[RMDB]
RNA sequence: GGGAACGACUCGAGUAGAGUCGAAAAUGAAUGCAAAGUUCCAGUACAGGUCAAGGAAUAGAAGAGAUAGGGACAGCCCUGGAGCCUGUGCUUCCUCUUUUCUUACCAUCUGACUGGAAAGUUUUUCACUUUUAUAUUCUGUGUCCAAUCAAUUGGAGAUGAAAAUUAGGUUCGCCUAAUUUUCAUCAAAAGAAACAACAACAACAAC
Reactivity to 2A3 in 0.01 (KOAc 150mM, MgCl2 10mM, bicine 150mM(pH8.5), 24C), signal-to-noise 4, nucleotides 027 to 156: u050g010a010a000u050g030c070a120a080a010g020u020u010c010c000a010g000u060a190c020a000g020g060u100c080a080a170g060g010a170a100u080a090g010a010a000g010a000g020a040u180a130g040g000g010a010c020a010g030c020c030c070u140g100g010a060g040c010c070u050g030u050g050c010u050u030c000c010u030c000u000u020u000u000c010u000u020a030c000c010a020u040c010u010g010a020c000u000g010g000a020a020a010g020u070u040u020u070u070c030a030c030u040u120u100u060a150u100a080u190u070c030u060g070u040g040u030c020c010a030a050u100c050a080a110u300u160g000g010a060
Reactivity to DMS in 0.01 (KOAc 150mM, MgCl2 10mM, bicine 150mM(pH8.5), 24C), signal-to-noise 1, nucleotides 027 to 156: u010g010a030a000u030g010c010a040a060a110g040u020u000c000c010a080g040u020a180c000a020g050g010u010c020a150a200g040g010a140a130u010a010g010a030a060g010a060g010a070u000a060g000g050g020a130c000a090g010c030c050c030u010g040g020a260g020c200c030u000g030u000g020c000u000u010c020c040u000c030u000u000u000u000c020u010u000a300c000c010a060u000c030u000g000a120c030u000g020g020a000a050a100g000u010u010u000u000u010c000a020c040u000u000u000u010a140u010a120u020u010c030u010g020u010g000u010c010c020a070a120u000c080a050a160u000u000g000g050a300
Chemical mapping of a 207-nucleotide RNA with 2A3 and DMS. 2A3 adducts were read by reverse transcription with SuperScript II with manganese. Source: RMDB library OK3TST, as collected in RNAgym. For DMS, 1,977 sequencing reads were counted. The reactions ran in a buffer of 150 mM KOAc, 10 mM MgCl2 and 150 mM bicine (pH 8.5), at 24 C. Values cover nucleotides 27 to 156.